[RMDB]
An RNA of 177 nucleotides, treated with DMS and read out base by base. The reactions ran in a buffer of 150 mM KOAc, 10 mM MgCl2 and 150 mM bicine (pH 8.5), at 24 C. For DMS, 581 sequencing reads were counted. DMS adducts were read by reverse transcription with MarathonRT.
RNA sequence: GGGAACGACUCGAGUAGAGUCGAAAAAAAGGUGGUCAAGCCAUAAUUCGCGAUCUCCCAAAUACAAUCGGAAUUCCAACUAAAAAAUACCCCACAAAUCAUUCAUCUUCAUUUUAUACUGACAAAGAAUUUGCCUAGUAUUCGUACUAGGCAAAUUAAAAGAAACAACAACAACAAC
Reactivity to DMS in 0.01 (KOAc 150mM, MgCl2 10mM, bicine 150mM(pH8.5), 24C), signal-to-noise 1, nucleotides 027 to 126: a010a050a120g010g010u000g010g000u010c030a150a160g000c010c070a040u000a050a090u000u000c040g010c040g000a120u000c100u010c010c010c040a100a040a150u020a050c140a010a100u020c010g020g000a060a060u010u000c060c010a010a130c040u020a020a040a040a120a090a070u000a150c130c010c010c000a040c180a120a050a150u000c060a020u000u000c010a010u000c020u000u020c020a060u000u000u000u000a040u010a080c090u000g010a040c160a020a090a120g000